[RMDB]
RNA sequence: GGGAACGACUCGAGUAGAGUCGAAAACUUACUGAGAGCACAAAGUUUCCCGUGCCAACAGGGAGUGUUAUAACGGUUUAUUAGUCUGGAGACGGCAGACUAUCCUCUUCCCGGUCCCCUAUGCCGGUCUUUGGUAAGUGUUCGCACUUACCAAAGAAAAAGAAACAACAACAACAAC
Reactivity to 2A3 in 0.01 (KOAc 150mM, MgCl2 10mM, bicine 150mM(pH8.5), 24C), signal-to-noise 6, nucleotides 027 to 126: c020u060u080a040c010u050g040a030g000a020g100c020a000c010a080a170a060g030u030u050u010c020c000c020g010u030g020c010c010a090a070c020a050g010g050g020a050g040u060g040u100u090a150u050a190a030c040g010g070u010u050u060a120u070u050a050g010u000c010u010g040g010a100g050a070c020g050g070c010a000g010a010c000u010a030u070c000c020u030c020u050u040c020c010c010g000g060u050c030c030c000c000u080a060u130g040c000c000g030g020
Reactivity to DMS in 0.01 (KOAc 150mM, MgCl2 10mM, bicine 150mM(pH8.5), 24C), signal-to-noise 4, nucleotides 027 to 126: c030u010u010a130c050u000g010a100g020a240g000c030a050c020a090a100a070g010u010u000u010c020c000c020g010u000g010c020c050a100a120c060a030g000g000g000a020g000u010g010u010u020a080u020a070a100c110g000g000u020u010u020a070u020u020a010g000u000c010u000g010g010a150g010a070c070g020g010c000a020g000a020c030u000a030u010c040c020u000c070u010u000c010c020c000g000g000u020c030c010c010c030u010a100u010g000c030c030g010g000